Description: This 177-nucleotide RNA was probed chemically with DMS. For DMS, 1,186 sequencing reads were counted.

[RMDB]
RNA sequence: GGGAACGACUCGAGUAGAGUCGAAAAGAUAUGGAUGUCGUCGACAUGAUCCUCGGAAACGAGCGAUCAACAGCGACAGACAUCCUAAGUCAAAAUCUAGAGGGACAGUUCGCUGUCCCUCUAGAAACAGGUAAACCCUGUUCGCAGGGUUUACCUGAAAAGAAACAACAACAACAAC
Reactivity to DMS in 0.01 (KOAc 150mM, MgCl2 10mM, bicine 150mM(pH8.5), 24C), signal-to-noise 2, nucleotides 027 to 126: g000a000u010a240u030g020g010a030u000g010u000c020g000u000c000g010a160c180a100u000g030a020u000c000c000u000c020g000g000a020a030a150c010g000a020g020c260g020a000u000c000a000a110c300a100g000c020g000a010c000a090g000a000c000a010u000c000c010u000a000a060g000u000c030a120a040a090a140u000c000u000a020g010a020g000g000g030a030c000a000g020u000u000c260g030c010u000g010u000c000c000c000u000c000u000a000g010a010a090a140
DMS adducts were read by reverse transcription with MarathonRT. Conditions: 150 mM KOAc, 10 mM MgCl2 and 150 mM bicine (pH 8.5), 24 C.